[RMDB]
RNA sequence: GGGAACGACUCGAGUAGAGUCGAAAACUUUUGGAAAUGUGAGGCCAGGCCCCGUGCCUUCCAAAUGCACCCGAUCUUUCCGCCGCCGUAGGUCCCGGAUAUAUGGAUUUGCUUGGGGACAUUGCUUGCUUUCACAGGGAGGCUGUGUACUAGCAAGGAAAUGGUUAGGUUUCGACCUAACCAUUUCAAAAGAAACAACAACAACAAC
Reactivity to 2A3 in 0.01 (KOAc 150mM, MgCl2 10mM, bicine 150mM(pH8.5), 24C), signal-to-noise 3, nucleotides 027 to 156: c020u040u050u030u040g030g040a040a100a110u170g080u090g050a030g030g000c000c030a040g000g070c000c000c010c050g060u100g000c010c000u060u010c010c000a010a040a040u060g050c040a080c000c030c000g070a100u020c030u020u080u040c020c040g030c020c030g010c000c030g080u020a060g000g110u010c010c020c020g030g000a040u050a010u020a030u140g090g000a070u060u070u120g020c020u040u100g000g000g000g030a020c020a050u020u140g030c000u010u030g000c000u030u090u060c020a020c000a060g050g020g020a050g120g000c020u020g010u010g000u010a070c100u030a040g000c020a020a020g020
Reactivity to DMS in 0.01 (KOAc 150mM, MgCl2 10mM, bicine 150mM(pH8.5), 24C), signal-to-noise 1, nucleotides 027 to 156: c020u000u000u000u000g010g010a100a070a050u010g020u010g010a130g030g040c030c090a110g040g020c040c020c010c050g020u000g010c020c100u010u010c010c000a030a090a070u010g050c060a160c040c000c010g010a100u000c040u000u000u000c010c040g040c060c030g010c020c050g020u000a090g020g070u000c000c030c020g000g010a110u000a080u000a080u010g030g020a160u010u000u000g020c080u000u000g030g030g030g040a100c040a070u000u010g030c000u000u000g000c030u000u010u000c030a040c040a060g030g020g030a110g060g000c060u030g050u010g010u000a090c030u000a080g010c040a080a190g000
The record gives the reactivity of an RNA of 207 nucleotides to 2A3 and DMS. The reactions ran in a buffer of 150 mM KOAc, 10 mM MgCl2 and 150 mM bicine (pH 8.5), at 24 C. Source: RMDB library OK3TST, as collected in RNAgym. Values are in units of 0.01, from 0 to 300, in steps of 10.